[RMDB]
RNA sequence: GGGAACGACUCGAGUAGAGUCGAAAACCCAGACCGUUCGCGGUCUGGGAAAACCGGAAUAAACAUGGGCCCAUGAGCCGAACCGGAAGGGCGACCGCCCAAAAACUUGUGUCUUCGGACACAAGAACAAAUAAACUGAGUUCGCUCAGUUUAUUUGAAAAGAAACAACAACAACAAC
Reactivity to 2A3 in 0.01 (KOAc 150mM, MgCl2 10mM, bicine 150mM(pH8.5), 24C), signal-to-noise 5, nucleotides 027 to 126: c000c000c000a010g000a000c000c000g040u070u070c170g010c010g090g000u000c010u010g000g000g020a040a070a000a030c010c010g010g040a120a150u180a110a130a030c080a170u130g040g020g010c020c030c060a170u200g020a030g000c020c030g030a030a030c010c010g030g010a080a040g100g000g000c020g050a150c070c090g000c000c000c000a050a080a000a000a000c010u010u000g000u000g000u000c010u020u060c250g090g000a000c000a000c000a000a010g000a010a020
Reactivity to DMS in 0.01 (KOAc 150mM, MgCl2 10mM, bicine 150mM(pH8.5), 24C), signal-to-noise 6, nucleotides 027 to 126: c010c000c000a000g010a020c000c000g030u000u010c180g030c010g020g000u000c000u000g000g000g000a010a020a050a140c010c000g000g010a140a110u010a090a070a120c130a110u010g010g010g020c020c030c110a110u010g000a140g010c010c010g010a080a080c030c010g000g010a150a080g010g000g010c040g010a080c150c100g010c000c000c020a030a060a080a090a130c000u000u000g010u000g000u000c010u000u010c150g010g000a000c000a000c000a000a000g000a080a150

This 177-nucleotide RNA was probed chemically with 2A3 and DMS. The DMS profile rests on 6,877 reads. The reactions ran in a buffer of 150 mM KOAc, 10 mM MgCl2 and 150 mM bicine (pH 8.5), at 24 C.